[RMDB]
RNA sequence: GGGAACGACUCGAGUAGAGUCGAAAAGAUAUGGAAAGUGGACAUGAUGGAGAUCGGAAACGAUCUUUCAUCAACAGCCACUUCCUAAGUCAAAAGUACGAUGCAUUCUUCGGAAUGCAUCGUACAACGUUUGCCUGAAGUUCGCUUCAGGCAAACGAAAAGAAACAACAACAACAAC
Reactivity to DMS in 0.01 (KOAc 150mM, MgCl2 10mM, bicine 150mM(pH8.5), 24C), signal-to-noise 1, nucleotides 027 to 126: g010a010u000a300u040g000g000a020a050a070g000u000g020g030a080c030a290u000g000a050u000g020g000a000g010a000u000c000g010g010a120a120a140c020g000a010u000c000u000u000u000c000a010u000c030a000a040c300a110g010c060c000a010c000u020u000c000c000u020a140a170g000u040c060a130a020a060a140g030u000a000c020g020a000u000g010c000a000u000u000c000u000u000c130g020g010a000a000u010g000c020a000u000c000g090u010a000c010a020a170
An RNA of 177 nucleotides, treated with DMS and read out base by base. The RNA was probed in 150 mM KOAc, 10 mM MgCl2 and 150 mM bicine (pH 8.5) at 24 C.